Source: RMDB library OK1LIB, as collected in RNAgym. The record gives the reactivity of an RNA of 177 nucleotides to DMS and 2A3.
[RMDB]
RNA sequence: GGGAACGACUCGAGUAGAGUCGAAAAGUAACGUUAGAACUGAUGCCACCUGGAGAAGGAGCCCAAGAGGGAGAGCCUCCCACAGUUGAGGCCAGAUACAAGUCUUUUUCGAUAAAAAUGCUAAAAGGCUUAAAAGGUUCUUCGGAACCUUUUAAGCAAAAGAAACAACAACAACAAC
Reactivity to DMS in 0.01 (KOAc 150mM, MgCl2 10mM, bicine 150mM(pH8.5), 24C), signal-to-noise 2, nucleotides 027 to 126: g000u000a060a060c080g000u020u010a110g080a130a110c050u000g000a050u030g030c040c040a130c040c070u000g010g010a130g000a070a100g050g000a070g010c010c000c020a220a070g010a090g010g050g040a130g020a100g040c060c030u000c020c020c020a030c160a120g010u060u030g000a110g020g010c020c050a030g020a110u000a070c100a040a130g000u020c010u000u000u000u040u000c130g000a100u080a030a010a090a050a050u040g020c020u000a050a010a100a030g010
Reactivity to 2A3 in 0.01 (KOAc 150mM, MgCl2 10mM, bicine 150mM(pH8.5), 24C), signal-to-noise 2, nucleotides 027 to 126: g010u010a040a000c090g000u040u300a070g010a080a010c040u010g010a040u210g020c000c000a040c020c000u000g040g000a130g020a040a040g040g030a020g000c000c000c010a050a010g160a180g150g010g000a020g000a020g000c040c040u030c000c030c000a090c000a080g010u090u100g060a060g010g000c030c000a030g100a030u140a000c140a030a030g010u010c000u000u070u000u020u050c020g000a000u020a020a100a110a000a010u020g010c020u100a000a200a010a110g090